[RMDB]
RNA sequence: GGGAACGACUCGAGUAGAGUCGAAAACAACGUAUAAACUGACUGUAGGUGACAUCUUCGUACUUACCUCUCACUCUGUGGCUACCUUGACGGCGCCCACAAUUGUGAAUCAAGAGAGGUAUGUUAAUCAGCCCUUGGUUCGCCAAGGGCAAAAGAAACAACAACAACAAC
Reactivity to DMS in 0.01 (KOAc 150mM, MgCl2 10mM, bicine 150mM(pH8.5), 24C), signal-to-noise 4, nucleotides 027 to 129: c010a090a060c120g040u000a160u040a000a070a050c130u030g030a100c140u030g000u000a040g040g040u000g020a060c050a070u030c050u020u020c140g000u040a000c070u000u000a080c020c030u010c040u000c010a300c030u030c050u020g000u000g010g030c010u040a090c030c050u000u060g040a100c130g010g050c300g040c300c060c010a030c020a000a050u010u070g020u000g010a060a040u020c200a090a040g020a020g020a020g030g010u000a020u000g040u020u060a080a120u010c150a080
Reactivity to 2A3 in 0.01 (KOAc 150mM, MgCl2 10mM, bicine 150mM(pH8.5), 24C), signal-to-noise 5, nucleotides 027 to 129: c030a010a010c050g150u120a070u070a110a140a010c040u060g180a020c010u000g080u070a010g000g070u010g020a030c020a070u060c060u090u070c050g050u060a050c000u000u030a020c000c010u000c020u010c000a020c010u070c020u010g000u010g000g000c010u060a110c000c000u080u130g120a080c070g030g010c020g030c000c060c000a020c000a020a130u070u100g040u030g090a080a090u190c070a160a000g000a010g000a000g010g000u000a030u010g020u000u040a070a080u090c050a000
Chemical mapping of a 170-nucleotide RNA with DMS and 2A3.
Reactivities are given for positions 27 through 129.
The RNA was probed in 150 mM KOAc, 10 mM MgCl2 and 150 mM bicine (pH 8.5) at 24 C.
It was measured as part of the RMDB library 15KLIB.